[RMDB]
The record gives the reactivity of an RNA of 177 nucleotides to 2A3 and DMS.
RNA sequence: GGGAACGACUCGAGUAGAGUCGAAAAUGCAGGGGCCGCGCCUGGGGCAGGGGCGGGCGGGGCCUGGCUCGCGGGCCGCCUGGCACUCUCUGCGGACGCCUGCUGGAGCUUACCUGGGCUCGCGGCGUCAGGACAGUCAAUUCGUUGACUGUCCUGAAAAAGAAACAACAACAACAAC
Reactivity to 2A3 in 0.01 (KOAc 150mM, MgCl2 10mM, bicine 150mM(pH8.5), 24C), signal-to-noise 4, nucleotides 027 to 126: u200g000c020a020g010g020g060g030c030c000g100c020g020c010c010u030g000g020g060g030c020a030g010g010g010g070c050g030g020g020c110g030g020g010g020c010c040u010g030g030c040u040c060g100c020g010g010g030c000c020g050c030c020u030g050g030c020a050c050u080c000u040c020u040g020c000g010g020a030c030g050c010c020u120g030c020u070g110g000a010g000c020u080u090a150c030c040u060g020g030g000c030u020c020g000c000g020g000c010g020
Reactivity to DMS in 0.01 (KOAc 150mM, MgCl2 10mM, bicine 150mM(pH8.5), 24C), signal-to-noise 2, nucleotides 027 to 126: u010g000c010a040g000g000g020g000c060c060g020c090g010c020c020u010g010g000g000g020c080a060g030g000g030g020c050g020g010g020c050g010g030g010g000c000c010u020g010g000c020u010c050g020c100g000g020g050c000c020g020c030c030u000g000g000c050a080c090u020c010u000c030u000g020c030g030g020a040c050g030c020c010u030g060c040u030g010g010a040g020c020u020u040a130c090c060u030g000g010g000c000u000c020g020c010g000g000c020g000
Reactivities are given for positions 27 through 126. 2A3 adducts were read by reverse transcription with SuperScript II with manganese. For DMS the reverse transcriptase was MarathonRT.